The data come from the RNA Mapping Database (RMDB), library OK2TRN. An RNA of 177 nucleotides, treated with 2A3 and DMS and read out base by base. For DMS, 1,766 sequencing reads were counted.
RNA sequence: GGGAACGACUCGAGUAGAGUCGAAAAGCUGUUUACCUGGGGUCUCCAGCUACCUCUGCCCUCAGUUUCCUGAUGGGCCAACUCUGAAUACCCAGGCGACAAAAUGGGGGUGUCAGACGGAACUCAGCAAGAUGACACAGUUCGCUGUGUCAUCUUGAAAAGAAACAACAACAACAAC
Reactivity to 2A3 in 0.01 (KOAc 150mM, MgCl2 10mM, bicine 150mM(pH8.5), 24C), signal-to-noise 1, nucleotides 027 to 126: g000c010u000g000u040u130u110a110c020c020u000g020g010g000g030u050c030u050c080c020a020g000c000u060a080c000c010u000c010u030g080c000c000c000u060c010a010g010u000u170u020c030c020u040g050a110u140g000g000g010c010c000a090a020c030u030c020u050g090a080a020u070a080c000c000c020a030g090g010c030g090a070c060a040a170a050a180u140g010g000g000g000g000u020g030u000c010a020g000a040c040g070g010a030a030c000u010c030a000g070
Reactivity to DMS in 0.01 (KOAc 150mM, MgCl2 10mM, bicine 150mM(pH8.5), 24C), signal-to-noise 2, nucleotides 027 to 126: g010c020u000g040u000u000u020a110c100c050u000g020g000g000g010u000c030u000c130c020a050g010c020u010a140c030c020u010c110u000g010c010c000c010u010c060a060g010u000u000u010c120c010u000g020a070u020g020g010g020c070c130a040a080c100u010c040u010g000a060a080u000a090c010c010c010a010g020g020c130g000a040c160a070a040a090a090u020g010g020g010g000g020u000g010u000c020a030g010a110c090g000g000a090a040c080u000c010a060g020

Values cover nucleotides 27 to 126. For DMS the reverse transcriptase was MarathonRT.